[RMDB]
This 177-nucleotide RNA was probed chemically with DMS.
It was measured as part of the RMDB library OK1LIB.
RNA sequence: GGGAACGACUCGAGUAGAGUCGAAAAGAAGAGAGGAAGAUUUAGGGGAAGAAGAUAACAAUAUUCACGCGGUCUUCCUAGUUACGUGUGUAGACACAAUGAUUGUUAUCAAAACUAAAUAUGAGAAAUCCUAGUCCUCCUUCGGGAGGACUAGGAUAAAAGAAACAACAACAACAAC
Reactivity to DMS in 0.01 (KOAc 150mM, MgCl2 10mM, bicine 150mM(pH8.5), 24C), signal-to-noise 1, nucleotides 027 to 126: g030a040a040g020a050g020a060g020g000a190a040g000a040u050u000u000a030g000g020g030g030a070a060g000a080a080g010a000u000a000a030c000a030a020u000a150u000u040c010a000c040g010c030g010g000u000c060u080u000c060c100u000a060g000u000u040a080c040g000u000g070u000g130u060a060g010a130c280a100c210a160a080u000g000a000u040u000g020u000u010a120u000c000a090a080a010a120c060u020a050a000a040u000a110u010g040a080g020a080a090